RNA sequence: GGGAACGACUCGAGUAGAGUCGAAAACUAUUUGACUUCGGUCAAAUAGAAAAAGAAACUUGUAAAGGCGCAGUCGCCUAGCGCCACUCAAAAGGGCGAUAAAAACAGAUCUCUUCGGAGAUCUGAAGUUAUGUGUAGAGUUCGCUCUACACAUAACAAAAGAAACAACAACAACAAC
Reactivity to DMS in 0.01 (KOAc 150mM, MgCl2 10mM, bicine 150mM(pH8.5), 24C), signal-to-noise 2, nucleotides 027 to 126: c000u010a010u000u010u000g010a020c000u000u020c100g030g010u000c000a000a010a020u010a010g000a020a060a070a100a200g010a140a120a110c150u010u010g000u010a060a110a180g000g010c000g010c030a160g000u000c000g000c000c000u000a040g020c010g010c000c010a100c030u020c090a010a030a030a120g010g030g020c000g010a040u000a030a080a140a120a090c010a020g000a020u000c000u000c000u000u010c170g050g000a010g000a010u000c000u000g000a030a050
Reactivity to 2A3 in 0.01 (KOAc 150mM, MgCl2 10mM, bicine 150mM(pH8.5), 24C), signal-to-noise 4, nucleotides 027 to 126: c000u000a000u010u000u010g010a020c010u030u040c240g030g000u010c000a000a000a000u010a000g060a050a140a000a000a000g090a060a110a010c160u250u240g120u300a250a200a260g000g000c000g000c050a060g090u030c010g000c000c020u000a010g010c010g000c000c020a040c010u060c030a000a010a010a020g010g000g000c000g010a000u100a020a100a000a000a010c000a010g000a000u000c000u000c010u050u150c230g130g000a000g000a000u020c000u000g000a030a000
Source: RMDB library M2PK50, as collected in RNAgym. This 177-nucleotide RNA was probed chemically with DMS and 2A3. Values cover nucleotides 27 to 126. Values are in units of 0.01, from 0 to 300, in steps of 10.